The data come from the RNA Mapping Database (RMDB), library TTRINS. This 177-nucleotide RNA was probed chemically with DMS. DMS adducts were read by reverse transcription with MarathonRT. The DMS profile rests on 13,020 reads. The reactions ran in a buffer of 150 mM KOAc, 10 mM MgCl2 and 150 mM bicine (pH 8.5), at 24 C.

[RMDB]
RNA sequence: GGGAACGACUCGAGUAGAGUCGAAAAGAUAUGGAGGCGAAUUACGUGUGACGAACUACUACGCGAAACGUAUGUGUCGGAAACGACACUACGGAGUAGCGUCACACGUAAUUCGCCUCCUAAGUCACAUUCAAAGUAAGUUCGCUUACUUUGAAUGAAAAGAAACAACAACAACAAC
Reactivity to DMS in 0.01 (KOAc 150mM, MgCl2 10mM, bicine 150mM(pH8.5), 24C), signal-to-noise 6, nucleotides 027 to 126: g010a050u010a300u010g000g010a020g000g010c000g010a020a010u000u000a000c010g010u000g020u000g000a020c010g010a090a120c050u010a080c020u000a070c300g010c150g000a080a090a170c030g010u000a010u010g040u000g010u000c000g020g000a100a080a230c000g010a010c000a010c010u000a000c000g010g000a030g010u000a010g020c000g000u000c000a000c000a010c000g010u000a000a000u000u000c000g010c000c000u000c000c000u000a000a060g000u010c030a300